[RMDB]
RNA sequence: GGGAACGACUCGAGUAGAGUCGAAAAGAAGGUGUGUUCGCACACCUUCAAAUAGGUCACACAAAAGCUUCCUGGAGUCAAGACCUGAAAACCAAAGGAGCAAAACCACCUACUUCGGUAGGUGGAAGUUCCUGUGUUAGUUCGCUAACACAGGAACAAAAGAAACAACAACAACAAC
Reactivity to DMS in 0.01 (KOAc 150mM, MgCl2 10mM, bicine 150mM(pH8.5), 24C), signal-to-noise 3, nucleotides 027 to 126: g010a020a010g000g010u000g010u000g030u010u000c230g020c010a010c000a000c000c000u010u000c000a020a050a050u010a120g000g000u000c010a100c160a150c160a070a050a090a100g000c050u000u000c000c030u010g020g000a130g010u020c190a090a100g000a030c010c000u000g020a040a010a100a120c060c010a030a070a110g020g000a020g020c040a070a090a100a170c010c000a000c000c000u000a000c010u000u010c160g040g020u000a000g000g000u000g000g000a020a020
Reactivity to 2A3 in 0.01 (KOAc 150mM, MgCl2 10mM, bicine 150mM(pH8.5), 24C), signal-to-noise 3, nucleotides 027 to 126: g000a000a000g020g010u010g010u020g030u050u130c150g030c080a000c000a000c000c000u010u010c000a000a000a000u040a000g000g000u010c010a040c010a000c030a150a110a040a060g000c000u150u080c010c040u080g160g040a080g080u130c100a100a020g010a030c000c000u000g010a040a060a010a010c010c000a010a040a050g000g000a010g010c020a020a030a000a070c000c000a010c010c000u010a000c000u040u050c240g100g000u000a010g000g000u000g000g000a000a010
The record gives the reactivity of an RNA of 177 nucleotides to DMS and 2A3. The RNA was probed in 150 mM KOAc, 10 mM MgCl2 and 150 mM bicine (pH 8.5) at 24 C. It was measured as part of the RMDB library M2PK50. The 2A3 profile rests on 4,252 reads. 2A3 adducts were read by reverse transcription with SuperScript II with manganese. Values cover nucleotides 27 to 126.